[RMDB]
RNA sequence: GGGAACGACUCGAGUAGAGUCGAAAAAGACCUUACGAGGUCAAGUAUCAAUAUGCCUAGACCAGACAAAGUGUAUUGCGUUGUUGCAAUCGUAUUGCACUUGUCCCGGUCUAAGCAUUUGGUAAAAAUGUUUCUGUGCGUUCGCGCACAGAAACAUAAAAGAAACAACAACAACAAC
Reactivity to 2A3 in 0.01 (KOAc 150mM, MgCl2 10mM, bicine 150mM(pH8.5), 24C), signal-to-noise 2, nucleotides 027 to 126: a010g010a000c020c050u060u050a150c290g130a080g000g000u000c000a000a010g070u000a000u020c000a080a030u080a020u200g000c010c010u000a020g030a000c000c000a000g000a000c000a040a120a060g000u000g000u020a080u070u000g000c040g000u100u080g130u200u160g300c090a030a020u070c000g000u000a080u010u010g000c000a000c020u000u050g000u000c000c080c210g000g020u030c000u000a000a000g090c000a000u000u030u000g010g000u030a090a100a030a000